[RMDB]
RNA sequence: GGGAACGACUCGAGUAGAGUCGAAAAGGAACUAUGUUCAUGCAUGAAGCCUCCACGUGCUUGUUUCGACGUUCGUAAACGAAUGAGCAUAGUUAAGAGCUGAAGGAGGCACGGCUCAAAAUAAAAAGGUUCAUCAACUGUUCGCAGUUGAUGGACCAAAAGAAACAACAACAACAAC
Reactivity to 2A3 in 0.01 (KOAc 150mM, MgCl2 10mM, bicine 150mM(pH8.5), 24C), signal-to-noise 7, nucleotides 027 to 126: g090g010a000a000c000u000a000u000g010u010u000c000a000u010g010c000a000u010g030a100a020g000c000c000u000c000c000a000c010g010u010g000c030u110u170g050u020u030u030c040g030a070c090g100u080u170c030g110u210a000a020a000c010g030a080a000u000g000a000g000c000a000u000a000g000u000u010a040a020g000a000g000c000u010g020a090a030g010g000a000g000g000c000a000c000g000g000c000u000c000a040a050a010a020u170a010a050a010a000a010
Reactivity to DMS in 0.01 (KOAc 150mM, MgCl2 10mM, bicine 150mM(pH8.5), 24C), signal-to-noise 4, nucleotides 027 to 126: g010g010a000a020c010u000a000u000g010u000u000c010a000u000g030c000a010u000g020a060a100g010c000c000u020c000c020a300c000g020u000g010c000u030u020g020u000u000u010c010g000a200c260g000u050u010c020g030u060a000a000a000c020g000a170a000u000g010a020g010c000a010u000a000g000u000u000a080a050g010a010g030c000u000g000a120a080g020g010a010g000g060c030a220c020g000g040c000u000c020a150a060a080a070u060a030a090a070a120a100